[RMDB]
RNA sequence: GGGAACGACUCGAGUAGAGUCGAAAAAAAACUAUGAGGCAGAAAUAUGCUGGAUUGGAUGCAGCUCAAUGGACACAACAGAAGUAUAAUGAGAUCAAUGCUGCUCUUUCUGUUGUCUCAUCACUGAGAGUCAGGAUAUGUUCGCAUAUCCUGACUCAAAAGAAACAACAACAACAAC
Reactivity to 2A3 in 0.01 (KOAc 150mM, MgCl2 10mM, bicine 150mM(pH8.5), 24C), signal-to-noise 1, nucleotides 027 to 126: a000a070a000a030c000u010a000u040g000a090g010g000c010a000g000a070a300a090u090a030u160g040c030u090g020g080a060u020u090g130g000a060u120g070c060a020g010c020u000c030a030a060u070g030g000a000c010a000c000a080a050c000a010g090a100a000g150u080a080u030a300a180u150g000a030g000a010u120c070a060a160u190g020c040u100g000c000u020c030u000u020u020c000u000g040u000u030g010u060c000u060c030a040u120c020a010c070u060g000a060
Reactivity to DMS in 0.01 (KOAc 150mM, MgCl2 10mM, bicine 150mM(pH8.5), 24C), signal-to-noise 1, nucleotides 027 to 126: a120a000a040a030c080u020a030u020g010a050g000g030c010a030g030a120a120a010u000a020u010g010c020u000g010g000a080u000u010g000g000a100u000g000c120a060g000c010u040c110a070a080u000g000g010a060c150a040c090a080a090c100a090g000a030a030g030u000a110u010a100a060u000g000a040g010a090u000c100a030a060u000g000c080u000g000c010u000c020u020u000u000c030u000g020u000u010g010u000c080u010c010a090u020c150a030c100u010g000a170
An RNA of 177 nucleotides, treated with 2A3 and DMS and read out base by base.
For 2A3 the reverse transcriptase was SuperScript II with manganese.
Values cover nucleotides 27 to 126.